Structure probing data (2A3 and DMS) for a 177-nucleotide construct. The RNA was probed in 150 mM KOAc, 10 mM MgCl2 and 150 mM bicine (pH 8.5) at 24 C. It was measured as part of the RMDB library OK2TRN. 2A3 is a SHAPE reagent: it acylates the 2'-hydroxyl of flexible nucleotides of all four kinds. 2A3 adducts were read by reverse transcription with SuperScript II with manganese. Reactivities are given for positions 27 through 126.

[RMDB]
RNA sequence: GGGAACGACUCGAGUAGAGUCGAAAACGACUUGAGGCUGCGCUAUAGGGCAAGAGCAUAGAGGAGACUGCUCGGAGAGAGGUGGCUGCAGUGGUCCAGGUGGGAGAUGCUGGUGACCGGACCAGCACCAGUAUAGCCGAUUCGUCGGCUAUACUGGAAAAGAAACAACAACAACAAC
Reactivity to 2A3 in 0.01 (KOAc 150mM, MgCl2 10mM, bicine 150mM(pH8.5), 24C), signal-to-noise 2, nucleotides 027 to 126: c010g050a010c010u030u070g010a020g010g100c030u040g020c040g030c050u040a040u160a240g000g070g000c030a070a010g020a020g060c030a020u110a070g080a060g160g040a030g050a050c040u030g030c020u010c050g060g000a080g010a010g000a010g030g010u040g070g000c020u090g010c040a020g020u060g050g020u060c040c030a020g030g000u060g060g020g000a100g000a030u080g000c020u000g010g030u020g030a180c070c020g010g030a010c000c010a010g000c000a010
Reactivity to DMS in 0.01 (KOAc 150mM, MgCl2 10mM, bicine 150mM(pH8.5), 24C), signal-to-noise 4, nucleotides 027 to 126: c090g020a100c090u010u010g010a130g020g010c050u000g010c070g030c030u000a050u000a170g010g010g020c040a090a130g010a040g000c020a060u000a110g020a130g000g010a100g000a100c130u000g000c040u010c060g010g000a120g010a070g030a080g020g030u000g000g020c060u000g020c060a040g030u000g010g010u000c050c050a040g010g010u000g010g010g000a070g010a110u000g000c010u000g000g010u000g000a170c080c110g000g000a120c000c000a010g010c020a070